[RMDB]
RNA sequence: GGGAACGACUCGAGUAGAGUCGAAAAGUAAAAAAAAACUGAUAGUCUUUUUGCAUCAGAUAACCAGAGAGUAUUUCUGUUUACUUUCAUAAUAAAUAAAAACAUUCUUUCACCUUCAGUUAAAAUACGGAAACAUAGAAUUCGUUCUAUGUUUCCGAAAAGAAACAACAACAACAAC
Reactivity to 2A3 in 0.01 (KOAc 150mM, MgCl2 10mM, bicine 150mM(pH8.5), 24C), signal-to-noise 3, nucleotides 027 to 126: g000u020a020a040a020a040a000a000a040a010a040c010u020g010a020u060a120g150u200c080u020u250u110u160u210g000c010a040u020c000a030g020a120u090a070a050c070c020a000g010a010g000a010g030u040a090u040u130u070c040u030g100u050u030u010a030c000u000u030u070c010a010u060a240a020u110a120a120a080u140a020a040a060a000a000c020a040u140u010c010u060u050u040c050a090c020c000u080u080c010a040g030u100u120a100a060a070a060u100a050